[RMDB]
RNA sequence: GGGAACGACUCGAGUAGAGUCGAAAACGAACAAAAAAUGUUCGAUUGCUGUUUGAAAAGUGUCGAGGUCGCUACAGAGUGACGUAAGUGCAAUGUCAUGUUCUUAACGAACGAGACGGGCUAAUGACUGUAGGUUUUUGUUCGCAAAAACCUACAGAAAAGAAACAACAACAACAAC
Reactivity to DMS in 0.01 (KOAc 150mM, MgCl2 10mM, bicine 150mM(pH8.5), 24C), signal-to-noise 3, nucleotides 027 to 126: c010g010a020a030c070a010a040a100a070a190a090u000g000u010u000c000g000a140u020u000g010c010u010g000u050u050u000g010a050a070a050a100g000u080g010u010c000g000a210g000g000u000c020g000c050u010a100c290a070g030a110g000u000g000a020c030g000u020a030a110g020u040g020c190a060a040u000g000u010c010a070u010g010u020u000c020u000u000a130a120c110g000a010a000c020g010a130g000a010c000g000g010g000c030u010a060a050u000g010a180
Reactivity to 2A3 in 0.01 (KOAc 150mM, MgCl2 10mM, bicine 150mM(pH8.5), 24C), signal-to-noise 2, nucleotides 027 to 126: c000g010a010a000c090a000a060a020a000a020a060u060g000u000u000c000g050a080u040u190g070c020u040g080u090u090u160g260a150a110a010a030g170u140g020u150c060g060a030g000g170u000c000g010c000u040a030c060a030g140a000g020u000g000a030c000g020u050a070a090g050u070g120c150a050a020u090g000u000c000a000u110g150u150u030c000u010u060a040a060c140g000a040a000c090g020a000g000a040c000g050g050g000c050u080a160a030u150g040a050